RNA sequence: GGGAACGACUCGAGUAGAGUCGAAAACUCUUGCACAGAAUCACCUUUCUAUAAUAACCAGUGCAAGAAGGGUUAUUAUACCAUUUAAUGUGCCGAGGACACGCGGAGUACGAUCGAGGGUACAGCAAAAACGUGAAGUACUUCGGUACUUCACGAAGACCUUACUAACGUUCGCGUUAGUAAGGUCAAAAGAAACAACAACAACAAC
Reactivity to 2A3 in 0.01 (KOAc 150mM, MgCl2 10mM, bicine 150mM(pH8.5), 24C), signal-to-noise 4, nucleotides 027 to 156: c000u000c010u010u020g000c000a000c010a020g090a120a090u160c040a120c040c030u110u210u140c110u090a030u000a030a010u000a010a000c000c010a000g000u010g000c010a010a000g000a010a010g010g010g000u010u000a000u010u020a010u020a030c000c040a130u110u140u170a160a080u100g020u030g040c010c020g010a060g010g040a020c040a010c130g050c030g040g070a070g040u060a040c040g030a070u100c030g020a070g000g040g000u080a060c040a020g060c050a020a050a030a010a060c000g000u000g000a000a000g000u000a000c000u010u030c110g030g000u010a000c000u000u000c020a000c000g000a000a010
Reactivity to DMS in 0.01 (KOAc 150mM, MgCl2 10mM, bicine 150mM(pH8.5), 24C), signal-to-noise 2, nucleotides 027 to 156: c030u000c020u010u000g030c000a000c000a150g010a110a230u010c080a190c050c020u010u010u010c100u000a030u000a020a020u000a010a020c010c010a300g000u000g000c020a030a040g010a060a150g020g020g000u000u010a040u010u000a040u000a060c090c200a140u010u000u040a070a100u000g010u010g000c050c020g040a190g000g000a080c050a030c030g000c060g000g020a140g050u000a050c000g000a130u010c010g010a050g000g060g020u010a050c070a070g000c050a070a080a020a100a100c010g030u000g000a000a030g000u000a010c000u000u030c300g040g030u010a010c000u000u020c000a040c000g000a020a090